The data come from the RNA Mapping Database (RMDB), library OK2TRN. Chemical mapping of a 177-nucleotide RNA with 2A3 and DMS.

RNA sequence: GGGAACGACUCGAGUAGAGUCGAAAAACAUAAUAUUCCAUUUCAGGGAUGUACCUUAAUUUAUUUAGUCUUUUAUAGAUGGAAAUUUAGGCUGUUUCCAGUCUUUUGCUCUUAUAAACAGUGCUGCGCAUGACAUAAGGUUCGCCUUAUGUCAUGCAAAAGAAACAACAACAACAAC
Reactivity to 2A3 in 0.01 (KOAc 150mM, MgCl2 10mM, bicine 150mM(pH8.5), 24C), signal-to-noise 1, nucleotides 027 to 126: a000c030a010u190a140a010u070a210u070u080c000c000a040u050u240u130c050a070g010g030g030a010u060g000u010a020c000c000u060u110a180a100u070u100u180a080u080u020u160a010g010u020c030u010u160u050u200a110u140a260g070a040u110g000g070a100a050a030u080u080u100a030g000g060c000u010g040u000u040u010c020c000a010g060u050c000u000u030u110u050g010c000u000c000u080u270a120u120a250a060a000c070a080g000u010g150c010u070g000c070
Reactivity to DMS in 0.01 (KOAc 150mM, MgCl2 10mM, bicine 150mM(pH8.5), 24C), signal-to-noise 1, nucleotides 027 to 126: a080c120a090u000a050a060u010a110u020u020c000c000a180u010u000u040c220a100g000g020g000a050u000g010u000a120c040c020u000u020a050a030u010u000u000a070u050u020u030a200g000u000c000u000u000u000u010a100u040a050g010a080u010g000g000a000a030a070u000u000u000a020g000g020c140u000g000u000u010u000c060c030a120g000u000c030u010u000u000u020g020c010u020c050u020u000a300u000a120a080a050c220a050g000u000g000c030u020g000c230
For 2A3, 499 sequencing reads were counted. The reactions ran in a buffer of 150 mM KOAc, 10 mM MgCl2 and 150 mM bicine (pH 8.5), at 24 C. Reactivities are given for positions 27 through 126.